An RNA of 177 nucleotides, treated with DMS and 2A3 and read out base by base. The 2A3 profile rests on 1,543 reads. 2A3 adducts were read by reverse transcription with SuperScript II with manganese. It was measured as part of the RMDB library RFMREP.

RNA sequence: GGGAACGACUCGAGUAGAGUCGAAAACAGCGGUAGCGCCCCCCUGUAAAGCGGUUCGCUAUGCCGGGGCCACUGUGAACCCUGCCGCCUGCCGGAACACUCUUCGCUCCGGACCAGCUCAGCCUCUGGAUAAAGUUAAGUUCGCUUAACUUUAUCCAAAAGAAACAACAACAACAAC
Reactivity to DMS in 0.01 (KOAc 150mM, MgCl2 10mM, bicine 150mM(pH8.5), 24C), signal-to-noise 1, nucleotides 027 to 126: c070a070g020c030g030g020u010a040g010c080g000c080c080c020c000c060c020u000g020u020a030a090a070g000c080g020g000u010u000c030g000c050u000a060u000g000c020c070g000g010g010g020c030c020a050c100u000g020u000g010a090a120c030c020c020u010g000c010c030g000c060c020u000g000c010c000g010g020a020a050c020a050c190u010c180u020u000c160g020c010u000c040c020g000g000a120c060c070a070g000c060u010c030a070g010c040c060u000c120u000
Reactivity to 2A3 in 0.01 (KOAc 150mM, MgCl2 10mM, bicine 150mM(pH8.5), 24C), signal-to-noise 1, nucleotides 027 to 126: c020a000g030c000g070g030u140a040g040c020g100c090c010c010c010c010c000u050g050u130a110a090a030g030c030g040g050u220u200c030g020c010u030a040u060g000c000c030g000g000g000g000c040c020a060c040u080g000u030g050a040a030c000c000c010u020g040c030c000g020c020c030u040g030c020c000g000g000a030a010c020a030c030u160c110u170u140c160g000c000u020c010c000g030g000a050c010c030a050g020c020u010c070a010g020c000c020u010c080u070